[RMDB]
Chemical mapping of a 177-nucleotide RNA with 2A3 and DMS. Values cover nucleotides 27 to 126. 2A3 adducts were read by reverse transcription with SuperScript II with manganese. For 2A3, 1,321 sequencing reads were counted. Conditions: 150 mM KOAc, 10 mM MgCl2 and 150 mM bicine (pH 8.5), 24 C.
RNA sequence: GGGAACGACUCGAGUAGAGUCGAAAAGGUCGUCUUUUCGAAGACGACCACUGUCGUUCCGAAAACUUUUCGAAACAUGUCGAAAGACAUGCUGAAACAGAAUUGGUGUGUGUUUCGACACACACAAACAGCUGAUCUACUUCGGUAGAUCAGCUGUAAAAGAAACAACAACAACAAC
Reactivity to 2A3 in 0.01 (KOAc 150mM, MgCl2 10mM, bicine 150mM(pH8.5), 24C), signal-to-noise 1, nucleotides 027 to 126: g030g000u000c000g000u000c060u000u050u040u080c200g120a000a010g000a000c000g010a000c000c000a020c000u020g000u010c010g000u000u000c020c000g030a050a120a080a090c010u020u020u050u050c010g080a080a050a020c030a010u000g000u010c000g030a070a040a010g000a000c000a000u000g000c060u090g000a020a050a020c090a090g100a140a260u160u110g150g010u010g010u000g000u000g000u010u000u060c080g030a030c000a000c010a020c000a010c000a000a050
Reactivity to DMS in 0.01 (KOAc 150mM, MgCl2 10mM, bicine 150mM(pH8.5), 24C), signal-to-noise 1, nucleotides 027 to 126: g000g020u000c010g010u010c000u000u000u010u030c280g010a000a000g020a000c000g000a000c000c000a010c070u000g000u010c010g020u000u000c000c000g000a070a100a060a190c100u000u010u000u000c040g010a200a120a100c000a010u020g000u000c000g010a140a150a170g000a000c000a000u000g000c010u000g020a100a060a020c230a050g010a040a110u000u000g020g000u000g010u000g000u010g020u000u000u010c130g010a050c010a010c030a020c000a000c010a030a080